[RMDB]
RNA sequence: GGGAACGACUCGAGUAGAGUCGAAAAGGUGGAUUGGCACCGAAGGCUCAGAUUGGCGGUGAUAGAGACUUGAUAGUGCAAGAGAGAAAGACCAAAAUUGCAGUACAUACAAAUGAGAUGUUUUGUAAAUCAUUAAUGAAGUCUAGUGUUAAAAAUGAAAAGGAAAGAUUUUCGAAUCUUUCCUUUUAAAAGAAACAACAACAACAAC
Reactivity to 2A3 in 0.01 (KOAc 150mM, MgCl2 10mM, bicine 150mM(pH8.5), 24C), signal-to-noise 2, nucleotides 027 to 156: g010g000u010g000g030a210u070u050g060g030c020a000c000c050g010a030a030g020g020c010u040c080a010g030a120u070u040g020g040c040g050g010u040g020a070u060a030g060a000g000a030c010u010u040g000a030u080a100g040u060g060c040a080a000g000a020g000a000g030a070a010a020g070a030c000c060a000a150a000a000u080u040g030c030a020g040u040a010c000a070u050a030c030a060a150a080u210g060a200g010a090u030g080u010u060u070u000g060u000a020a090a170u020c000a050u060u140a080a100u150g040a000a060g020u060c020u070a030g070u080g100u210u200a210a120a190a100a010u300g000
Reactivity to DMS in 0.01 (KOAc 150mM, MgCl2 10mM, bicine 150mM(pH8.5), 24C), signal-to-noise 3, nucleotides 027 to 156: g020g050u000g000g000a190u010u000g000g030c010a120c060c060g030a050a110g010g040c030u000c020a120g000a110u000u010g020g040c030g010g010u000g000a120u000a110g000a140g030a040c040u000u030g010a110u000a090g000u010g010c040a060a130g000a180g010a140g020a100a120a100g010a090c040c030a050a040a070a160u010u000g040c040a060g010u000a070c070a110u010a090c060a050a090a100u000g000a130g000a060u000g000u010u000u000u000g010u000a080a060a110u000c030a050u000u000a080a100u010g010a030a120g000u000c020u000a090g030u000g000u000u010a010a060a050a090a090u000g000

Structure probing data (2A3 and DMS) for a 207-nucleotide construct. The DMS profile rests on 4,683 reads. It was measured as part of the RMDB library OK3TST. Reactivities are rounded to 0.1 and cut off at 0 and 3. The reactions ran in a buffer of 150 mM KOAc, 10 mM MgCl2 and 150 mM bicine (pH 8.5), at 24 C.